Chemical mapping of a 177-nucleotide RNA with 2A3 and DMS.
For DMS the reverse transcriptase was MarathonRT.
The data come from the RNA Mapping Database (RMDB), library OK2TRN.
The RNA was probed in 150 mM KOAc, 10 mM MgCl2 and 150 mM bicine (pH 8.5) at 24 C.
The 2A3 profile rests on 9,661 reads.

RNA sequence: GGGAACGACUCGAGUAGAGUCGAAAAAUGCUUGGCAAUGGCAUCAGGAAUAGGGGCUACCGUGGCGGUGUCCGCAGCGAAUACUGGCAGUGCCGUCAACAGGCUUAGGGCCAGUAAUGGGGAAGCAGAAUUAAUACAGGUUCGCCUGUAUUAAUUCAAAAGAAACAACAACAACAAC
Reactivity to 2A3 in 0.01 (KOAc 150mM, MgCl2 10mM, bicine 150mM(pH8.5), 24C), signal-to-noise 5, nucleotides 027 to 126: a000u070g010c020u050u060g060g020c050a060a120u080g030g000c010a040u030c050a060g030g070a070a060u110a160g000g000g040g000c030u060a070c030c040g060u050g060g010c040g020g050u040g040u030c020c030g010c020a010g040c020g060a100a040u060a100c000u000g010g000c010a040g070u010g080c020c020g040u070c020a140a160c040a100g000g000c000u040u120a090g050g050g000c010c000a010g010u030a030a050u090g010g000g000g010a010a020g010c060a030
Reactivity to DMS in 0.01 (KOAc 150mM, MgCl2 10mM, bicine 150mM(pH8.5), 24C), signal-to-noise 9, nucleotides 027 to 126: a060u010g010c040u000u000g000g020c070a090a060u010g000g010c020a030u000c060a080g000g010a080a090u010a100g010g010g010g010c050u000a060c080c050g010u000g000g020c040g010g010u000g000u000c040c040g020c060a060g010c070g010a120a130u000a030c020u000g000g010c010a100g010u000g000c000c000g000u000c230a070a100c260a120g010g010c020u000u000a120g010g000g010c010c010a020g000u000a020a070u010g010g000g000g000a080a080g010c160a140